Description
Chemical mapping of a 177-nucleotide RNA with 2A3 and DMS. The reactions ran in a buffer of 150 mM KOAc, 10 mM MgCl2 and 150 mM bicine (pH 8.5), at 24 C. High DMS reactivity at an A or C suggests that its Watson-Crick edge is free.

RNA sequence: GGGAACGACUCGAGUAGAGUCGAAAAGAUAUGGAUAUGGGCCUCUUUUGACGCGUGGUAAUCGGAAACGAUUACUAAACGCGAUAAGAGGCCAUAUCCUAAGUCAAAAGAGCUCUUCGGAGCUCAACCAUAGGUAGGGGUUCGCCCCUACCUAUGGAAAAGAAACAACAACAACAAC
Reactivity to 2A3 in 0.01 (KOAc 150mM, MgCl2 10mM, bicine 150mM(pH8.5), 24C), signal-to-noise 3, nucleotides 027 to 126: g000a030u060a020u160g030g000a010u010a020u060g160g300g300c010c010u080c080u060u190u120u260g300a200c090g000c000g000u040g020g000u000a000a000u010c000g020g010a060a010a000c000g000a000u000u010a000c010u000a050a060a000c000g000c000g000a010u080a060a000g000a000g000g000c000c000a010u010a000u000c000c000u000a030a000g000u000c010a000a020a050a200g020a000g010c020u010c010u080u200c300g170g000a020g010c020u000c010a000a000
Reactivity to DMS in 0.01 (KOAc 150mM, MgCl2 10mM, bicine 150mM(pH8.5), 24C), signal-to-noise 2, nucleotides 027 to 126: g020a060u010a300u010g010g000a010u000a010u000g020g030g010c000c000u000c000u000u010u010u020g020a180c050g040c020g040u010g020g000u000a000a020u000c010g010g010a090a060a220c000g010a010u000u010a010c000u020a040a100a080c020g020c000g020a050u020a020a000g010a010g000g030c010c000a010u000a000u010c000c000u010a030a090g030u000c030a100a080a120a140g000a010g010c000u000c000u000u020c200g020g000a020g020c000u000c010a020a120